[RMDB]
RNA sequence: GGGAACGACUCGAGUAGAGUCGAAAAUCUUGUGCGAACCGAUCACGCACGAGAUGGUCCUUACGGGGUGUCCCAACAGUCGAGGGGCACGCAGGAUGCCUAGAAUAGACCACUAGGUAUCCUCAGUGCGCCAUGCAAUGGAGGAGCAUGGUGCACUACUGUCAAAUGUGUUCGCACAUUUGACAGUAAAAGAAACAACAACAACAAC
Reactivity to 2A3 in 0.01 (KOAc 150mM, MgCl2 10mM, bicine 150mM(pH8.5), 24C), signal-to-noise 9, nucleotides 027 to 156: u000c000u000u000g000u000g010c010g040a130a080c090c110g090a150u150c090a020c040g000c000a000c000g010a000g000a000u010g010g020u030c010c000u030u100a100c100g070g000g010g010u010g010u000c010c000c020a060a050c090a070g240u220c110g090a110g020g000g000g010c010a000c020g020c000a010g000g000a000u000g000c000c000u010a030g030a110a070u090a090g140a140c040c030a030c050u000a000g000g000u010a000u000c000c000u000c010a000g000u000g000c000g000c000c000a000u000g000c010a040a190u170g050g120a080g010g020a020g000c000a000u000g000g000u000g000c000a000c000u000
Reactivity to DMS in 0.01 (KOAc 150mM, MgCl2 10mM, bicine 150mM(pH8.5), 24C), signal-to-noise 3, nucleotides 027 to 156: u000c000u000u010g010u000g020c000g000a040a300c120c060g000a070u020c140a250c000g000c000a030c020g020a030g010a020u000g000g000u000c010c000u000u020a110c110g000g010g010g030u000g020u000c010c000c010a120a210c040a200g010u000c080g010a230g010g010g020g010c040a030c040g010c060a030g000g010a030u010g010c000c000u000a020g020a090a130u000a140g000a160c100c100a250c010u000a000g000g010u000a000u000c010c000u000c040a040g010u000g000c010g020c010c000a000u000g000c000a100a040u010g040g000a140g050g030a300g000c000a010u010g000g000u010g010c000a000c010u000